[RMDB]
RNA sequence: GGGAACGACUCGAGUAGAGUCGAAAACCCAUUGAUGAUGAUGAUCUGAUCAGCUAUAUCAUUGCUGGUCUUGAUGAAGAAUAUGUGCCGGUAAUCUCGUCCAUUGUUGGGCGACCAGAUCAGGUGAGUAUUUGUACCGGUUCGCCGGUACAAAUACAAAAGAAACAACAACAACAAC
Reactivity to DMS in 0.01 (KOAc 150mM, MgCl2 10mM, bicine 150mM(pH8.5), 24C), signal-to-noise 4, nucleotides 027 to 126: c010c010c000a100u000u030g020a080u010g000a100u000g000a150u020g000a040u000c000u010g000a010u000c010a010g010c020u030a120u030a140u050c300a080u020u010g000c000u000g000g010u010c020u010u010g000a030u000g010a150a100g020a120a080u010a040u020g010u020g010c010c010g010g000u000a080a060u010c170u000c020g000u000c010c010a070u020u040g030u040u010g000g020g000c030g000a050c270c110a080g000a050u010c020a080g010g000u010g000a180
Reactivity to 2A3 in 0.01 (KOAc 150mM, MgCl2 10mM, bicine 150mM(pH8.5), 24C), signal-to-noise 4, nucleotides 027 to 126: c000c000c010a060u080u170g110a090u020g010a020u030g000a080u030g040a010u000c030u000g020a020u010c020a000g000c020u080a030u010a080u200c070a130u070u100g000c000u000g010g050u000c000u000u030g010a010u010g020a040a100g020a100a040u100a090u300g060u130g010c000c010g030g070u070a060a060u000c010u010c040g010u020c030c020a060u130u120g230u220u090g050g000g010c000g000a040c040c040a070g020a080u050c010a030g000g020u030g080a030
Chemical mapping of a 177-nucleotide RNA with DMS and 2A3.